Structure probing data (DMS and 2A3) for a 177-nucleotide construct.
The RNA was probed in 150 mM KOAc, 10 mM MgCl2 and 150 mM bicine (pH 8.5) at 24 C.
The DMS profile rests on 3,476 reads.
The 2A3 profile rests on 2,233 reads.
[RMDB]
RNA sequence: GGGAACGACUCGAGUAGAGUCGAAAAUACCAUGAUUUCUGUGGGUGAAAACCAGACUCUGAGAGACCAACUGGAAGUCACUGUAGUUAUCCAGGUGUGAAGUGAUAAAAAUCUUGUCCUAAGGUGGGAUACCUUGUCCUUUCGAGGACAAGGUAUCAAAAGAAACAACAACAACAAC
Reactivity to DMS in 0.01 (KOAc 150mM, MgCl2 10mM, bicine 150mM(pH8.5), 24C), signal-to-noise 4, nucleotides 027 to 126: u010a160c020c010a120u020g000a100u000u010u000c030u010g040u000g010g000g010u000g010a050a090a110a190c040c040a080g000a110c110u000c040u010g010a130g000a110g000a070c060c090a100a120c030u000g000g000a050a160g010u000c020a040c060u010g010u010a040g010u000u010a060u000c050c100a090g000g010u010g010u000g010a080a080g020u010g010a070u020a020a070a080a090a060u000c020u010u000g000u000c010c020u000a080a080g000g020u000g010g010
Reactivity to 2A3 in 0.01 (KOAc 150mM, MgCl2 10mM, bicine 150mM(pH8.5), 24C), signal-to-noise 3, nucleotides 027 to 126: u070a010c000c000a040u090g010a060u050u120u060c020u050g050u080g120g030g010u050g090a010a000a030a060c040c000a050g000a070c010u020c060u160g220a160g010a010g030a160c060c010a090a110c050u000g030g020a060a080g090u060c010a010c060u040g020u080a010g000u010u030a030u020c040c040a050g000g030u030g030u020g080a060a080g080u090g110a090u130a070a110a010a020a010u050c030u030u060g030u000c010c000u020a050a050g140g010u100g030g100